The data come from the RNA Mapping Database (RMDB), library OK3TST. An RNA of 207 nucleotides, treated with 2A3 and DMS and read out base by base. The 2A3 profile rests on 1,696 reads.
RNA sequence: GGGAACGACUCGAGUAGAGUCGAAAAAAAGGCACGUCGACGAUGAUUCGCGCGGACGGCUCCGAGGUCGUUCGGUGGGUUAAGUCGGAAGUAGACCGCGACCGCAUGGUCGCACUUAUGGAGGCGGCGCAGGCAGCUUUCUGCGAAGAUCUUCCGCCACAUUAGUGGAGUUCGCUCCACUAAUGUGAAAAGAAACAACAACAACAAC
Reactivity to 2A3 in 0.01 (KOAc 150mM, MgCl2 10mM, bicine 150mM(pH8.5), 24C), signal-to-noise 3, nucleotides 027 to 156: a000a000a010g060g010c030a020c040g030u010c000g060a010c010g020a080u300g020a030u030u010c020g030c020g010c020g060g000a000c000g000g010c010u050c150c110g090a240g060g010u030c010g000u000u000c000g000g000u000g010g000g000u030u010a010a040g000u020c020g010g010a060a000g030u090a040g030a060c050c090g000c000g000a010c010c000g080c240a120u300g030g000u000c000g040c010a020c020u120u110a100u220g070g020a020g010g000c010g000g000c010g000c020a020g100g000c040a060g090c090u080u150u060c010u060g000c000g010a060a020g020a090u060c010u030u020c030c010g020c000
Reactivity to DMS in 0.01 (KOAc 150mM, MgCl2 10mM, bicine 150mM(pH8.5), 24C), signal-to-noise 1, nucleotides 027 to 156: a010a030a050g000g020c020a090c090g010u000c000g040a060c000g000a200u000g000a100u010u000c020g040c010g050c030g000g010a020c000g010g010c030u000c050c300g020a160g000g000u000c010g050u010u000c000g000g080u000g000g000g010u010u000a110a300g020u000c000g010g010a020a080g020u000a070g000a170c070c030g010c000g000a010c030c000g000c180a170u010g060g050u000c020g000c020a000c020u000u000a120u030g010g000a120g010g030c000g010g040c040g000c090a070g020g000c050a100g000c070u010u010u000c010u000g000c040g010a150a160g000a200u000c000u000u000c010c010g000c080

Conditions: 150 mM KOAc, 10 mM MgCl2 and 150 mM bicine (pH 8.5), 24 C. Values are in units of 0.01, from 0 to 300, in steps of 10.